[RMDB]
RNA sequence: GGGAACGACUCGAGUAGAGUCGAAAAGAUAUGGAUCCCCAUGCGAACUACUGCGCGAGUAUUGGUUACCCAUCGUUCGGAAACGAACGUAAGGCUUUCUCGGCGCAGCGCAUGGGGAUCCUAAGUCGUUAUGCUUGGAGUUCGCUCCAAGCAUAACAAAAGAAACAACAACAACAAC
Reactivity to 2A3 in 0.01 (KOAc 150mM, MgCl2 10mM, bicine 150mM(pH8.5), 24C), signal-to-noise 1, nucleotides 027 to 126: g100a000u190a060u220g000g000a030u030c000c000c000c000a000u000g060c010g000a140a080c090u280a100c000u300g000c060g020c010g010a000g060u250a150u060u250g300g110u300u300a250c050c000c030a090u130c000g000u020u000c030g030g030a150a090a080c000g010a000a010c000g020u000a200a170g050g000c040u070u110u000c050u010c020g300g120c040g010c070a000g000c010g000c030a000u050g010g030g010g010a000u010c010c000u000a030a010g010u000c010
Reactivity to DMS in 0.01 (KOAc 150mM, MgCl2 10mM, bicine 150mM(pH8.5), 24C), signal-to-noise 1, nucleotides 027 to 126: g010a120u010a300u020g000g000a000u010c010c000c000c010a000u010g010c000g010a140a060c120u010a300c050u000g010c000g090c010g000a070g020u000a000u000u000g000g010u010u020a210c060c020c040a160u020c010g030u040u000c000g030g000a060a140a220c000g020a000a010c040g050u020a120a180g000g000c020u000u020u000c010u000c010g030g000c010g020c000a000g020c000g020c000a000u010g000g040g000g000a000u000c000c000u000a010a110g000u000c170
The data come from the RNA Mapping Database (RMDB), library TTRINS. Structure probing data (2A3 and DMS) for a 177-nucleotide construct. Reactivities are given for positions 27 through 126. The 2A3 profile rests on 1,292 reads. The RNA was probed in 150 mM KOAc, 10 mM MgCl2 and 150 mM bicine (pH 8.5) at 24 C. DMS adducts were read by reverse transcription with MarathonRT. The DMS profile rests on 939 reads. As a SHAPE reagent, 2A3 marks flexible, mostly unpaired nucleotides at the ribose 2'-OH.